[RMDB]
About this RNA
Chemical mapping of a 307-nucleotide RNA with 2A3 and DMS. For DMS, 4,006 sequencing reads were counted. The 2A3 profile rests on 1,173 reads. Source: RMDB library POS240, as collected in RNAgym. The reactions ran in a buffer of 150 mM KOAc, 10 mM MgCl2 and 150 mM bicine (pH 8.5), at 24 C.
RNA sequence: GGGAACGACUCGAGUAGAGUCGAAAAAGAAAAGGCGGUAACCCUUCUGAGCUAAAUUAGGCGGGGGUGUAAGGGUAGCAGGGCACUUUAGUGCGAGGACCUGCUUCCUGUCUAGGGAGUGGAGUGGUUAAGGUGUGAUGAGUGCUUUAACAAGCAUCUCUCAUUGGCUCAACCACAUACACCUGCGACAAGGCCCACCUGCCAUGGCACAAGGGCUUCCCACCUCCGUGUGAGCCCUUGUUGUUUUUCUAUCACUCCUGAGCUAAAGUAUGCAGUUCGCUGCAUACAAAAGAAACAACAACAACAAC
Reactivity to 2A3 in 0.01 (KOAc 150mM, MgCl2 10mM, bicine 150mM(pH8.5), 24C), signal-to-noise 1, nucleotides 027 to 266: a000g040a010a030a000a000g030g000c010g030g000u020a050a020c000c000c050u040u060c070u180g060a020g000c020u030a090a070a160u260u160a140g000g020c020g020g010g080g000g020u040g000u100a060a120g060g040g000u020a000g010c040a070g000g020g060c160a020c170u060u190u180a140g120u100g050c030g020a040g060g050a050c000c030u020g010c000u040u000c000c000u000g040u030c060u090a010g020g050g000a040g120u020g000g060a150g040u020g010g010u010u020a020a010g090g060u030g020u020g000a090u240g020a030g000u010g020c000u070u020u110a080a080c050a040a040g030c000a060u050c020u000c000u000c030a020u020u050g170g020c010u000c040a000a000c010c000a000c000a010u150a010c040a000c020c030u060g050c030g010a020c050a020a020g040g020c040c030c000a060c000c000u020g000c010c000a010u000g010g000c020a000c000a020a020g000g000g010c000u100u160c000c000c000a020c000c110u120c090c130g060u050g030u030g060a000g000c010c010c000u010u000g000u000u000g040u030u020u010u070u040c090u090a170u250c020a010c000u050c000c040u030g070a040g050c050u040a060a050a000
Reactivity to DMS in 0.01 (KOAc 150mM, MgCl2 10mM, bicine 150mM(pH8.5), 24C), signal-to-noise 2, nucleotides 027 to 266: a120g000a000a060a110a080g000g020c070g010g020u000a080a130c040c010c000u000u010c090u010g010a140g010c060u010a080a110a110u020u010a080g040g020c030g020g000g020g000g020u000g000u010a030a060g000g000g000u000a020g010c020a040g010g000g010c030a050c020u000u010u000a130g030u000g020c030g020a060g020g020a300c040c000u000g000c020u000u010c020c000u000g000u010c030u020a300g010g000g010a060g030u000g000g000a110g050u000g010g000u000u000a030a020g000g000u000g000u000g000a030u010g000a020g010u010g010c010u000u000u000a120a110c300a040a040g010c020a010u010c070u000c000u010c000a010u000u010g020g010c000u000c060a040a040c020c000a000c010a100u010a120c050a120c030c010u000g000c220g000a030c030a110a040g000g000c050c040c060a130c100c040u000g020c030c030a050u010g000g000c030a020c010a020a040g010g000g010c020u010u010c080c050c000a090c040c130u000c130c100g000u000g010u010g000a070g010c000c000c000u000u000g000u000u000g010u000u000u000u000u000c000u000a170u000c110a050c030u000c000c010u000g000a090g000c030u010a070a050a180